[RMDB]
RNA sequence: GGGAACGACUCGAGUAGAGUCGAAAAGAUAUGGAUUUAGAGGUGUAGACCACACGUCGGAAACGACGUGGGUCGCAGAUACUCCCCACCUAAAUCCUAAGUCAAAACCACAGGUUCGCCUGUGGAAUCAUGUUCAUAUGUUCGCAUAUGAACAUGAAAAAGAAACAACAACAACAAC
Reactivity to DMS in 0.01 (KOAc 150mM, MgCl2 10mM, bicine 150mM(pH8.5), 24C), signal-to-noise 6, nucleotides 027 to 126: g000a010u000a120u010g000g000a010u000u000u000a000g010a120g010g010u000g020u010a060g010a010c010c000a140c000a000c000g010u000c000g010g010a030a030a070c000g020a010c000g040u000g010g000g010u000c000g010c210a040g010a190u020a130c250u010c060c040c050c030a120c120c000u000a000a010a000u000c000c000u000a030a100g000u000c010a090a050a090a130c000c000a010c010a000g000g010u000u010c250g020c000c000u010g010u000g000g000a060a050
Reactivity to 2A3 in 0.01 (KOAc 150mM, MgCl2 10mM, bicine 150mM(pH8.5), 24C), signal-to-noise 3, nucleotides 027 to 126: g000a000u030a010u050g000g000a000u000u010u010a050g030a070g130g100u120g010u190a080g050a020c030c020a130c010a000c300g010u000c000g000g030a020a010a010c000g010a000c000g000u000g010g010g000u000c010g000c010a030g050a040u300a300c130u190c040c020c000c030a040c020c000u010a000a020a000u000c000c000u000a050a000g020u000c020a010a000a090a140c000c000a010c000a000g000g040u050u060c150g090c090c000u000g000u000g000g010a000a030